Notes
Chemical mapping of a 177-nucleotide RNA with DMS. The DMS profile rests on 898 reads.

RNA sequence: GGGAACGACUCGAGUAGAGUCGAAAAGAGCGUCGUGUUGACACUCAAAAAGUUUCAGAUUUUGGAACAUUUCGGAUUUUGGAUUUUUGGAUCAGGGAUGCUCAUAGUGUACAAGUUCGCUUGUACAGAAGGCCUUAAUGUUCGCAUUAAGGCCUUCAAAAGAAACAACAACAACAAC
Reactivity to DMS in 0.01 (KOAc 150mM, MgCl2 10mM, bicine 150mM(pH8.5), 24C), signal-to-noise 1, nucleotides 027 to 126: g000a020g040c030g020u000c010g020u000g000u000u030g020a030c150a070c030u010c020a030a030a020a080a090g000u010u000u000c020a020g010a140u000u010u010u010g040g020a010a170c200a100u010u000u000c070g020g000a080u010u010u000u010g040g010a070u000u000u010u010u000g020g000a100u010c030a040g010g000g010a040u000g020c040u000c010a100u000a060g010u000g030u000a000c020a010a020g010u010u010c270g040c010u010u010g000u000a010c010a070
The data come from the RNA Mapping Database (RMDB), library RFMREP. The RNA was probed in 150 mM KOAc, 10 mM MgCl2 and 150 mM bicine (pH 8.5) at 24 C.